[RMDB]
RNA sequence: GGGAACGACUCGAGUAGAGUCGAAAAGGGGUCUGCAUUACUUCCCGACGAAGGCUAAGACAUGAGCUGAAGCCUCCACGGCUCAACAGCUUAGCCAGAGGGAAGGGUGCAGACGGAGGCACCCAAACGGUAUAGGGUGUUCGCACCCUAUACCGAACCUUCUUGAAAAGUUCGCUUUUCAAGAAGGAAAAGAAACAACAACAACAAC
Reactivity to 2A3 in 0.01 (KOAc 150mM, MgCl2 10mM, bicine 150mM(pH8.5), 24C), signal-to-noise 2, nucleotides 027 to 156: g040g000g020g010u000c000u010g010c000a010u020u070a300c020u030u000c010c010c000g080a140c010g010a030a010g000g000c000u000a000a000g000a040c070a260u250g020a020g010c000u040g030a120a020g010c000c000u000c010c000a040c010g040g000c010u000c000a060a120c060a140g110c000u000u000a000g010c000c010a010g000a000g000g000g000a000a000g000g000g000u010g000c000a000g000a000c020g000g000a000g000g020c010a030c000c000c010a040a080a030c000g000g000u000a000u000a000g010g020g000u010g020u040u030c100g020c050a000c010c000c000u010a000u000a000c000c000g000a000a010
Chemical mapping of a 207-nucleotide RNA with 2A3.
The 2A3 profile rests on 2,466 reads.
Values cover nucleotides 27 to 156.